[RMDB]
RNA sequence: GGGAACGACUCGAGUAGAGUCGAAAAGCAAAGGGGUUCGCCCCUUUGCAAAUAAACCGAUCAAAUAUAAGAAUAUAACGCGAAGAUCGGAAAAGAGCAAAUAAAGGUUCUACUUCGGUAGAACCAACCAUAAGGUUUUGUUCGCAAAACCUUAUGGAAAAGAAACAACAACAACAAC
Reactivity to DMS in 0.01 (KOAc 150mM, MgCl2 10mM, bicine 150mM(pH8.5), 24C), signal-to-noise 1, nucleotides 027 to 126: g020c000a020a010a010g020g000g000g070u000u010c300g050c060c020c000c000u010u000u010g030c000a010a020a050u000a080a100a180c010c000g010a010u000c020a110a100a090u000a020u030a020a190g000a120a110u020a020u000a050a120c100g000c140g000a120a100g000a000u000c040g000g010a050a050a120a220g010a140g000c120a070a110a020u000a070a110a100g010g010u000u000c000u020a000c000u000u000c210g020g030u020a000g020a010a010c000c000a030a070
Reactivity to 2A3 in 0.01 (KOAc 150mM, MgCl2 10mM, bicine 150mM(pH8.5), 24C), signal-to-noise 2, nucleotides 027 to 126: g010c000a010a000a000g000g030g020g010u030u080c120g120c000c000c000c020u000u030u010g000c010a030a000a000u010a000a000a010c000c010g000a020u000c030a010a160a050u190a050u080a210a020g050a140a020u140a020u020a250a190c070g020c060g150a160a030g000a000u020c000g010g000a040a010a080a040g090a030g010c080a040a050a040u110a100a160a040g000g010u000u000c010u000a030c000u040u070c230g040g000u010a000g000a000a000c000c000a000a010
Description
This 177-nucleotide RNA was probed chemically with DMS and 2A3.